[RMDB]
RNA sequence: GGGAACGACUCGAGUAGAGUCGAAAAGUGACUGCCUCUUUUGAAGGGAAACCGAUGUUUGCCGGUAUCAUUCGCGUGAUGUUUCCUGAAACGGCGCAUCUAUCCGAAACGGUUCCACAUGUGGAUACACUGGUACGUGAUUCGUCACGUACCAGUGAAAAGAAACAACAACAACAAC
Reactivity to DMS in 0.01 (KOAc 150mM, MgCl2 10mM, bicine 150mM(pH8.5), 24C), signal-to-noise 6, nucleotides 027 to 126: g000u010g020a090c040u000g000c030c030u000c040u010u000u010u000g020a130a150g020g010g000a050a100a120c070c100g010a070u010g010u000u000u010g010c020c020g010g000u010a070u000c060a100u000u000c110g010c180g020u010g020a060u000g010u000u000u000c030c020u010g010a070a070a120c160g010g020c300g010c050a040u000c020u000a130u000c040c010g010a060a050a100c110g010g000u000u000c020c030a070c160a060u000g020u010g000g000a140u010a160
Reactivity to 2A3 in 0.01 (KOAc 150mM, MgCl2 10mM, bicine 150mM(pH8.5), 24C), signal-to-noise 3, nucleotides 027 to 126: g050u050g050a070c050u090g000c010c020u020c040u060u180u100u120g160a110a070g030g010g030a090a040a020c050c030g030a040u060g060u060u120u130g040c010c000g000g000u080a070u080c040a050u130u040c070g020c060g110u060g030a040u030g050u030u100u080c000c020u040g040a090a060a010c030g000g000c010g000c000a020u000c030u060a080u020c020c000g030a060a080a050c040g030g000u070u020c020c000a050c030a120u140g020u090g120g000a040u080a150